Notes:
This 177-nucleotide RNA was probed chemically with DMS and 2A3. For DMS, 1,677 sequencing reads were counted. For DMS the reverse transcriptase was MarathonRT. The RNA was probed in 150 mM KOAc, 10 mM MgCl2 and 150 mM bicine (pH 8.5) at 24 C. The 2A3 profile rests on 1,634 reads.

[RMDB]
RNA sequence: GGGAACGACUCGAGUAGAGUCGAAAAGGCAGCUUGAACUUAGAUGUCAUGGGAAGUGUUAUCACAGCUGUUCCAUUUGAUCCAAACUUCCAACAGUUUAUUACAGGUUCAUUAGAUUUUGCUACUGUCCCACGUUAUACUUCGGUAUAACGUGGGAAAAAGAAACAACAACAACAAC
Reactivity to DMS in 0.01 (KOAc 150mM, MgCl2 10mM, bicine 150mM(pH8.5), 24C), signal-to-noise 2, nucleotides 027 to 126: g000g010c010a030g010c040u000u000g010a050a040c070u020u000a050g010a130u000g000u020c070a150u000g000g000g010a050a040g010u000g000u010u020a070u000c080a090c180a120g020c100u010g000u000u000c020c010a150u030u000u000g010a040u010c170c160a050a090a070c040u010u000c070c080a070a090c110a060g010u000u010u000a060u020u000a160c150a030g000g010u000u000c020a010u010u000a080g000a100u000u000u000u000g010c010u010a210c040u010g000
Reactivity to 2A3 in 0.01 (KOAc 150mM, MgCl2 10mM, bicine 150mM(pH8.5), 24C), signal-to-noise 3, nucleotides 027 to 126: g030g000c000a000g000c020u020u020g030a020a030c000u030u010a030g020a160u160g020u100c060a060u050g050g020g030a000a000g000u030g050u170u200a140u170c050a020c020a070g090c060u090g120u160u060c010c000a030u110u080u120g050a030u070c010c020a010a060a030c010u070u100c050c010a030a040c040a080g000u030u100u090a120u060u110a090c080a060g010g010u030u020c010a020u110u070a050g130a210u090u250u120u100g000c000u010a040c070u120g030